[RMDB]
RNA sequence: GGGAACGACUCGAGUAGAGUCGAAAACGUUGAAGAGUUACGUGUAACUUGGUAUCGUCCACAGCCUGCAAAGCCUCACUAAACUUUCUGAAACAUUGAAAGAAGUGAAAAAUCACGGCGUUGAGCUAUCAUUGGUUGUCUUCGGACAACCAAUGAUAAAAGAAACAACAACAACAAC
Reactivity to 2A3 in 0.01 (KOAc 150mM, MgCl2 10mM, bicine 150mM(pH8.5), 24C), signal-to-noise 2, nucleotides 027 to 126: c020g010u030u150g060a070a030g010a030g030u030u110a040c120g070u140g000u100a000a060c000u020u020g050g020u120a000u120c000g000u020c020c010a040c000a000g090c000c000u030g000c000a000a100a140g040c030c000u050c000a000c000u080a070a160a080c000u000u000u000c000u000g000a010a070a020c040a090u100u130g000a000a000a000g020a040a000g000u000g040a070a000a000a000a060u130c050a030c140g010g000c020g020u000u050g030a030g000c010u000
Reactivity to DMS in 0.01 (KOAc 150mM, MgCl2 10mM, bicine 150mM(pH8.5), 24C), signal-to-noise 2, nucleotides 027 to 126: c080g040u000u000g030a140a110g000a090g000u000u000a050c020g030u000g000u000a010a060c030u020u000g000g030u020a020u000c040g000u010c020c020a100c040a100g020c010c000u080g000c110a050a080a090g010c090c040u010c000a000c000u030a100a100a130c000u000u000u000c000u000g000a170a150a110c210a190u080u000g000a000a020a000g000a060a030g000u020g010a000a050a020a060a140u000c110a060c110g000g000c010g000u030u000g000a080g010c110u020